[RMDB]
RNA sequence: GGGAACGACUCGAGUAGAGUCGAAAAACUGCAAAAAAUACAAACACUUACGCAUUAGCAGCUUAAUAACCUGCCUGCGUGACCAGUCGCGAAUUGCUUGUGUUUGCUGAUUGGUCUUAAAAUAGCAAGCUACGUUGGGAUUGAGUCAGGCAGUUCCGUAUGAUUUACCGUUCGCGGUAAAUCAUACAAAAGAAACAACAACAACAAC
Reactivity to 2A3 in 0.01 (KOAc 150mM, MgCl2 10mM, bicine 150mM(pH8.5), 24C), signal-to-noise 3, nucleotides 027 to 156: a000c030u070g030c050a000a060a030a020a080a060u220a090c090a020a170a010c050a040c090u140u090a010c000g000c000a010u100u100a030g000c010a000g000c000u000u050a020a010u030a020a040c000c000u010g000c000c020u010g000c010g010u000g010a000c010c000a000g000u010c000g000c010g030a010a020u050u070g050c030u090u080g060u020g000u020u000u020g000c030u040g000a000u020u000g000g000u060c000u030u090a040a040a010a000u100a020g040c050a110a010g010c000u010a000c020g020u010u000g030g000g050a180u010u040g000a020g030u020c020a010g020g000c010a020g010u030u050c020c020
Reactivity to DMS in 0.01 (KOAc 150mM, MgCl2 10mM, bicine 150mM(pH8.5), 24C), signal-to-noise 1, nucleotides 027 to 156: a190c060u010g000c080a020a020a100a060a060a090u020a110c060a110a040a100c040a090c070u000u000a000c040g030c030a070u000u000a070g000c000a000g000c020u000u010a170a130u000a100a050c300c010u010g010c000c000u000g030c010g060u000g010a030c010c010a080g000u000c020g000c050g010a020a050u000u010g040c110u020u010g030u000g000u000u000u000g000c000u020g050a100u000u010g010g030u000c000u010u000a020a010a070a040u000a100g010c060a080a120g020c020u000a000c030g020u000u010g010g010g000a150u000u000g000a080g010u000c010a030g000g000c000a020g060u010u000c040c100